[RMDB]
RNA sequence: GGGAACGACUCGAGUAGAGUCGAAAAGUCGUCGGUAGAGAGUACUCACCUGUCUUCGGUAGAGAGUACUCACCUGUCGUCGGUAGACAGUACUCACCUGCUGUCGACCGUCGAUGCUGACGCCUGUCCGCCGCUCUUCCGCUCUGCUGUCGAGCGGGGCUGUAUUGGAGUUCGCUCCAAUACAGCCAAAAGAAACAACAACAACAAC
Reactivity to 2A3 in 0.01 (KOAc 150mM, MgCl2 10mM, bicine 150mM(pH8.5), 24C), signal-to-noise 3, nucleotides 027 to 156: g030u010c000g000u000c000g000g000u080a050g100a020g000a000g230u000a000c000u010c020a080c030c030u160g160u300c150u160u200c150g030g010u160a080g130a040g000a010g140u000a010c000u000c010a020c000c030u040g010u020c000g010u010c000g020g000u000a010g000a000c000a000g000u040a020c060u080c130a100c040c040u030g020c010u010g010u000c000g000a000c020c000g000u000c010g010a010u060g000c010u010g000a000c010g010c000c000u030g040u030c010c010g040c010c000g000c020u020c000u020u010c020c020g030c050u150c160u300g020c020u050g000u020c010g000a000g010c000g000g000
This 207-nucleotide RNA was probed chemically with 2A3.
Conditions: 150 mM KOAc, 10 mM MgCl2 and 150 mM bicine (pH 8.5), 24 C.
Source: RMDB library VIROID, as collected in RNAgym.